Overview
Chemical mapping of a 207-nucleotide RNA with 2A3. For 2A3, 978 sequencing reads were counted.

RNA sequence: GGGAACGACUCGAGUAGAGUCGAAAAGACAAGAUCUCCUUCUCUCCAACGUUGGUGCCAACUCAUGAUUCUCCUAACCUGUGCUUGGAGAGACGUGGACCCAGAGUCAGAGGACCUCUGACUUCCAAAAACCCGUUUCGGUUCGCCGAAACGGGAACCCUCUUGUUUUGUUCGCAAAACAAGAGGGAAAAGAAACAACAACAACAAC
Reactivity to 2A3 in 0.01 (KOAc 150mM, MgCl2 10mM, bicine 150mM(pH8.5), 24C), signal-to-noise 2, nucleotides 027 to 156: g050a020c100a080a090g010a240u040c010u000c010c000u020u010c000u010c020u020c010c010a060a030c050g050u050u050g060g050u080g040c050c060a130a100c170u140c100a160u120g130a230u230u100c100u090c090c060u070a040a080c000c010u040g050u120g070c200u020u000g000g000a000g000a020g000a010c020g020u050g000g020a010c000c010c020a070g030a010g040u000c010a000g000a020g040g100a090c020c050u010c000u000g000a000c000u030u030c030c020a070a110a080a110a100c000c000c000g000u000u010u000c030g010g060u050u060c060g000c070c000g000a010a000a000c000g000g010g000a000a000